[RMDB]
RNA sequence: GGGAACGACUCGAGUAGAGUCGAAAACGAACUGGCUGGAAAAUAAUAAUAAAAUAGCUGCACGUUGCAAUGGUGGAUUCCGUCUAGCAGCGUGCAGCUGAAGACGGAAUGCACCCCAGCUAGUUCGGGACGUACUAGGCUUCGGCCUAGUACGUCCAAAAGAAACAACAACAACAAC
Reactivity to 2A3 in 0.01 (KOAc 150mM, MgCl2 10mM, bicine 150mM(pH8.5), 24C), signal-to-noise 1, nucleotides 027 to 126: c000g000a000a000c000u000g000g000c000u000g000g040a000a110a000a000u270a140a040u300a060a060u300a110a130a000a150u170a000g000c000u050g030c000a000c000g020u000u020g000c050a070a020u130g000g070u010g050g090a250u300u070c010c000g000u030c000u120a000g020c000a000g000c000g000u000g000c000a000g000c000u000g000a000a000g040a000c020g010g090a080a000u090g010c110a140c000c000c000c000a000g000c000u000a000g020u000u000c000g000
The record gives the reactivity of an RNA of 177 nucleotides to 2A3. The data come from the RNA Mapping Database (RMDB), library OK1LIB. Conditions: 150 mM KOAc, 10 mM MgCl2 and 150 mM bicine (pH 8.5), 24 C. 2A3 adducts were read by reverse transcription with SuperScript II with manganese. For 2A3, 488 sequencing reads were counted.